The record gives the reactivity of an RNA of 207 nucleotides to 2A3. The RNA was probed in 150 mM KOAc, 10 mM MgCl2 and 150 mM bicine (pH 8.5) at 24 C.

RNA sequence: GGGAACGACUCGAGUAGAGUCGAAAAAAUGCCGCCUCAGUUCCAAGCUCUUUGGUGGCACUGUAAACAGUCCUAUUGAGUUAGGGGCAGUCAACCACGUUGCGAAGCUAAAUUAUCUGGUCGAGAGUUACGAUUCCCUACUUCGGUAGGGAAUCAAGGUGGAAUACAUGUUCGCAUGUAUUCCACCAAAAGAAACAACAACAACAAC
Reactivity to 2A3 in 0.01 (KOAc 150mM, MgCl2 10mM, bicine 150mM(pH8.5), 24C), signal-to-noise 1, nucleotides 027 to 156: a000a000u090g010c010c060g030c030c040u030c030a000g000u030u030c080c020a080a030g020c000u040c000u080u000u030g050g000u070g020g000c020a010c010u070g030u060a080a100a040c040a080g030u040c000c000u020a040u040u070g090a050g040u090u050a070g040g020g000g020c000a000g030u000c000a010a060c030c030a070c100g010u070u140g000c010g050a020a000g000c060u070a050a120a100u150u140a060u130c020u030g020g030u120c060g000a020g000a000g250u110u100a010c050g010a000u000u000c000c000c000u010a000c000u010u050c100g080g000u000a000g000g000g020a010a010u000c000a000a000